[RMDB]
RNA sequence: GGGAACGACUCGAGUAGAGUCGAAAAGAUAUGGAUGGUCAGACCUUUUGACGAGGCCCUAUCGGAAACGAUAGUGAGCCUCGAUAAGGUCGACCAUCCUAAGUCAAAACGGGUGUUCGCACCCGAAGGUUAGUGAGAGGUUCGCCUCUCACUAACCAAAAGAAACAACAACAACAAC
Reactivity to 2A3 in 0.01 (KOAc 150mM, MgCl2 10mM, bicine 150mM(pH8.5), 24C), signal-to-noise 2, nucleotides 027 to 126: g020a010u080a020u110g010g000a010u000g000g020u030c110a090g090a030c020c000u030u020u170u300g300a220c120g000a010g000g000c000c000c030u000a000u000c000g040g020a060a050a020c000g020a030u000a000g070u100g060a070g020c020c000u010c000g000a010u000a000a020g000g000u000c010g000a000c020c000a000u020c000c000u000a010a000g000u000c040a000a030a000a130c020g030g000g000u010g040u120u150c260g050c010a000c010c020c020g010a050a020
Reactivity to DMS in 0.01 (KOAc 150mM, MgCl2 10mM, bicine 150mM(pH8.5), 24C), signal-to-noise 2, nucleotides 027 to 126: g000a030u010a300u000g000g000a000u000g030g010u000c000a140g030a000c000c000u000u000u030u000g020a220c100g010a020g040g010c000c020c000u000a020u010c000g010g000a130a060a240c000g000a030u000a010g030u000g000a160g020c000c000u000c000g030a020u000a000a020g020g000u000c000g000a010c000c000a000u000c000c000u000a000a070g000u000c020a100a080a210a220c040g010g020g020u000g010u010u020c300g000c000a040c000c000c000g000a050a060